[RMDB]
RNA sequence: GGGAACGACUCGAGUAGAGUCGAAAAGACACCACUUUCUUAUGACUGUGUUUCUAACUUACUUUGUGUGAGGACAUCGGUAGAUGGGCAGUUCGGCUGGGGCGGCACGGGCUUGAAAUGGUAUCAAGUAAUGCCGUAUCUUCGGAUACGGCAUUACAAAAGAAACAACAACAACAAC
Reactivity to 2A3 in 0.01 (KOAc 150mM, MgCl2 10mM, bicine 150mM(pH8.5), 24C), signal-to-noise 3, nucleotides 027 to 126: g040a000c040a020c040c000a010c040u000u080u040c010u050u190a120u140g010a030c000u030g000u000g020u050u050u040c030u070a150a070c020u060u100a020c030u040u260u150g140u080g000u050g040a020g040g030a010c020a100u070c030g050g010u080a090g020a120u060g010g010g050c010a040g030u050u090c060g000g000c060u050g000g000g030g000c030g000g000c050a010c010g000g000g030c000u000u070g020a060a040a050u050g010g000u040a000u150c050a010a050
Reactivity to DMS in 0.01 (KOAc 150mM, MgCl2 10mM, bicine 150mM(pH8.5), 24C), signal-to-noise 2, nucleotides 027 to 126: g000a100c090a130c020c010a060c080u030u000u000c020u000u010a050u030g020a050c070u020g010u000g010u030u000u000c040u010a080a180c050u020u000a040c030u000u020u040g010u000g010u000g000a040g010g000a040c060a040u010c120g010g010u020a060g020a030u010g010g000g010c040a060g010u000u010c090g010g020c010u000g000g020g030g010c030g010g000c070a060c100g010g000g040c060u020u000g040a010a020a040u010g000g000u010a030u000c100a040a180
Conditions: 150 mM KOAc, 10 mM MgCl2 and 150 mM bicine (pH 8.5), 24 C. An RNA of 177 nucleotides, treated with 2A3 and DMS and read out base by base. It was measured as part of the RMDB libraries RFM100 and RFMREP. 2A3 adducts were read by reverse transcription with SuperScript II with manganese.